[RMDB]
RNA sequence: GGGAACGACUCGAGUAGAGUCGAAAACGCGCAACUGUACCUCGCCUGUAUGAAGACCUAUACGUAGUCGGAUCGGCGCGAGCGAGGUCCGCUGCAGAUCCAGCGCGCAUGCAGCGGCAUCGCUAGCGUCCGCAGACGAGUUCGCUCGUCUGCGGACAAAAGAAACAACAACAACAAC
Reactivity to 2A3 in 0.01 (KOAc 150mM, MgCl2 10mM, bicine 150mM(pH8.5), 24C), signal-to-noise 6, nucleotides 027 to 126: c030g030c000g000c030a090a080c110u130g040u220a090c040c020u030c040g030c020c020u110g020u130a120u130g090a070a020g030a040c010c030u080a050u020a200c090g110u090a030g020u050c020g000g050a120u090c050g060g000c020g000c020g040a010g000c010g000a010g000g040u060c000c000g000c000u000g000c000a000g010a080u050c030c020a040g050c020g000c010g000c070a040u040g000c000a000g000c000g010g000c010a020u010c010g000c030u020a020g030c010
Reactivity to DMS in 0.01 (KOAc 150mM, MgCl2 10mM, bicine 150mM(pH8.5), 24C), signal-to-noise 6, nucleotides 027 to 126: c050g030c040g010c020a120a110c150u010g020u010a070c070c030u010c060g010c040c030u000g000u010a050u000g010a190a140g010a060c040c040u010a060u010a150c100g020u000a050g010u000c030g000g000a100u000c040g010g000c050g010c040g000a030g010c000g010a030g000g020u010c010c010g000c000u000g010c000a030g000a120u010c050c040a140g010c050g000c020g020c190a120u000g000c000a000g010c000g010g000c040a100u000c010g010c000u000a060g010c060